[RMDB]
RNA sequence: GGGAACGACUCGAGUAGAGUCGAAAAGUUCAUCCCCUGAUCAAGCAUGCCCGAAACGGUGAGGCGGAAAGCAAAUUAAAUAACGUCAACCCAUCGGGACGGUUGGCCAGUUAAGAAGUGAGGAUUCAAAAGAUCGAACCGUUCGCGGUUCGAUCAAGAUAUCUUGAUUGUUCGCAAUCAAGAUAUCAAAAGAAACAACAACAACAAC
Reactivity to 2A3 in 0.01 (KOAc 150mM, MgCl2 10mM, bicine 150mM(pH8.5), 24C), signal-to-noise 7, nucleotides 027 to 156: g060u090u110c020a070u060c040c010c000c000u030g000a030u030c010a020a040g130c020a050u300g030c010c000c000g050a100a100a050c060g020g000u070g020a180g040g000c020g010g050a130a070a010g110c150a090a060a110u180u170a090a120a090u160a110a020c000g000u000c000a010a000c000c000c010a030u020c000g000g010g000a000c000g000g030u010u010g010g000c010c020a030g010u080u180a110a090g040a090a030g020u110g120a070g130g020a070u070u110c090a050a060a030a060g000a000u000c000g000a010a000c010c000g010u030u060c220g000c010g080g000u000u000c000g000a000u000c000a000a000
Reactivity to DMS in 0.01 (KOAc 150mM, MgCl2 10mM, bicine 150mM(pH8.5), 24C), signal-to-noise 3, nucleotides 027 to 156: g010u020u000c120a140u010c010c010c010c010u000g000a080u000c040a040a060g040c020a100u000g030c020c020c010g010a050a170a150c150g040g040u000g000a120g030g010c020g000g010a110a110a160g010c080a060a090a160u000u000a070a090a130u000a110a160c060g020u000c010a060a020c020c010c030a300u000c020g000g000g020a100c070g010g000u000u000g000g010c000c030a070g000u000u010a090a100g010a150a160g030u000g020a100g010g010a140u000u010c030a050a050a120a190g000a020u000c010g000a020a020c000c010g020u000u000c270g070c020g050g030u000u000c000g010a000u000c000a010a060